[RMDB]
RNA sequence: GGGAACGACUCGAGUAGAGUCGAAAAGGAGGUAAACGGGCAUUUCAGUUCAAGGCCGUUGCCGUCACUGCAUAAACCAUCGGGAGAGCAGGCGGUACGCAUACUUUCGUCGCGAUAGAUGAUCGGGGUCGUUACUCUGUUUCGACAGAGUAACGACAAAAGAAACAACAACAACAAC
Reactivity to 2A3 in 0.01 (KOAc 150mM, MgCl2 10mM, bicine 150mM(pH8.5), 24C), signal-to-noise 2, nucleotides 027 to 126: g010g030a050g050g000u070a010a030a080c110g020g040g000c030a040u030u110u160c070a090g060u060u110c060a080a030g090g000c020c000g010u020u080g030c040c000g050u050c030a060c180u000g000c020a050u100a160a130a020c030c010a130u200c150g110g020g000a100g000a010g040c020a010g000g030c040g010g000u010a020c020g000c010a040u030a200c020u050u090u080c040g040u020c030g020c030g100a020u050a110g110a040u100g020a030u050c050g000g040g100
Reactivity to DMS in 0.01 (KOAc 150mM, MgCl2 10mM, bicine 150mM(pH8.5), 24C), signal-to-noise 2, nucleotides 027 to 126: g030g020a130g000g010u000a050a070a110c060g010g000g030c030a140u010u020u040c120a110g000u000u000c110a090a140g000g000c010c030g000u000u000g010c010c020g010u000c040a160c040u010g000c070a060u000a110a140a100c050c060a060u010c190g010g010g010a120g010a160g000c020a080g020g030c050g010g020u000a050c050g000c080a030u000a090c090u010u010u000c080g000u000c070g000c060g010a120u010a080g000a020u000g010a120u000c010g010g000g020